The record gives the reactivity of an RNA of 177 nucleotides to 2A3 and DMS. Values cover nucleotides 27 to 126. DMS adducts were read by reverse transcription with MarathonRT. The DMS profile rests on 1,356 reads.
[RMDB]
RNA sequence: GGGAACGACUCGAGUAGAGUCGAAAACUGCGGCGCAUGGAGGCCAAUGGCUUUGUCACCCGCGAACAUGAACAAAGCGACUAUCGCAAAGUAGUCGUGUGCCUGACUACCCGCGGCCGCCGGCUGAGAAUUUCCUCUGUUUCGACAGAGGAAAUUCAAAAGAAACAACAACAACAAC
Reactivity to 2A3 in 0.01 (KOAc 150mM, MgCl2 10mM, bicine 150mM(pH8.5), 24C), signal-to-noise 1, nucleotides 027 to 126: c010u020g000c000g030g000c020g030c090a070u190g020g040a030g030g000c060c000a010a190u180g050g000c000u020u050u090g030u000c020a020c050c020c030g080c000g040a040a060c140a090u210g040a050a020c000a030a100a030g000c010g030a010c000u080a060u290c070g010c250a160a090a020g020u010a010g010u000c000g040u000g100u090g070c000c030u020g020a060c000u100a130c010c010c000g000c010g030g010c000c010g000c000c010g030g000c060u030g040a000
Reactivity to DMS in 0.01 (KOAc 150mM, MgCl2 10mM, bicine 150mM(pH8.5), 24C), signal-to-noise 2, nucleotides 027 to 126: c050u000g020c000g000g030c040g080c100a090u010g010g020a160g040g000c010c030a080a300u020g040g020c030u010u000u010g010u000c030a090c190c030c070g000c070g020a080a050c100a100u000g010a060a080c060a050a040a130g000c000g030a040c020u010a030u000c030g050c250a080a070a130g020u010a010g000u010c000g000u020g020u000g020c020c060u010g000a050c060u000a120c060c020c100g010c100g030g000c110c020g000c030c040g010g000c040u000g010a240